[RMDB]
Conditions: 150 mM KOAc, 10 mM MgCl2 and 150 mM bicine (pH 8.5), 24 C. The record gives the reactivity of an RNA of 177 nucleotides to DMS and 2A3. For 2A3, 1,603 sequencing reads were counted. The DMS profile rests on 804 reads. DMS adducts were read by reverse transcription with MarathonRT. It was measured as part of the RMDB library TTRDEL. Values cover nucleotides 27 to 126.

RNA sequence: GGGAACGACUCGAGUAGAGUCGAAAAGAUAUGGAUCUUUAACCGCCAUCACUAUUCGGAAACGAACGAAUGAUGGAACUACGGUGACAGAUCCUAAGUCAAACGCUUCUGGUUCGCCAGAAGCGAAGCAAUAGAUGCACUUCGGUGCAUCUAUUGCAAAAGAAACAACAACAACAAC
Reactivity to DMS in 0.01 (KOAc 150mM, MgCl2 10mM, bicine 150mM(pH8.5), 24C), signal-to-noise 2, nucleotides 027 to 126: g030a010u030a220u000g010g000a000u000c000u000u020u000a300a060c000c000g030c000c000a000u000c000a020c010u030a230u000u030c000g010g000a120a130a190c040g020a000a090c120g000a070a050u010g000a000u030g030g000a100a050c060u010a300c000g000g020u000g000a060c300a000g000a000u000c000c000u010a060a100g000u020c040a050a090a220c040g000c000u010u000c000u000g000g020u000u000c240g010c000c000a010g000a000a000g000c000g000a010a010
Reactivity to 2A3 in 0.01 (KOAc 150mM, MgCl2 10mM, bicine 150mM(pH8.5), 24C), signal-to-noise 1, nucleotides 027 to 126: g000a010u010a040u170g010g010a000u000c000u000u040u130a000a010c000c000g030c010c000a000u030c000a020c100u150a110u090u030c000g020g020a010a140a070c040g060a030a020c070g050a240a300u010g000a000u000g030g020a010a000c070u210a030c070g050g000u050g020a010c030a050g000a000u000c000c000u000a070a000g020u020c070a130a040a090c030g010c010u000u010c010u010g090g080u110u110c300g080c060c000a000g000a000a010g010c010g000a010a020